[RMDB]
RNA sequence: GGGAACGACUCGAGUAGAGUCGAAAAGGCGACAAGGCUAACACUGGCGUGACGUCACUCUAUUGUGCAACGCCCGAGCACAAAUAAGAAAGGGUGCACGGAAAUAUUCCGAUGCACCCUUGAAACCCCUUCGCCUCAAUUUCGAUUGAGGCGAAGGAAAAGAAACAACAACAACAAC
Reactivity to DMS in 0.01 (KOAc 150mM, MgCl2 10mM, bicine 150mM(pH8.5), 24C), signal-to-noise 1, nucleotides 027 to 126: g030g000c030g020a020c130a100a090g000g020c040u010a150a060c250a080c160u010g000g000c030g000u000g000a110c030g020u000c090a080c070u030c190u000a080u000u000g040u000g050c050a050a040c150g010c040c000c020g030a060g000c010a000c030a010a050a070u000a090a070g000a180a020a000g020g000g000u000g040c000a020c000g000g000a020a130a250u000a300u000u000c000c010g020a110u000g000c000a000c020c000c000u000u000g000a090a070a170c140c040
Chemical mapping of a 177-nucleotide RNA with DMS. The RNA was probed in 150 mM KOAc, 10 mM MgCl2 and 150 mM bicine (pH 8.5) at 24 C. For DMS the reverse transcriptase was MarathonRT.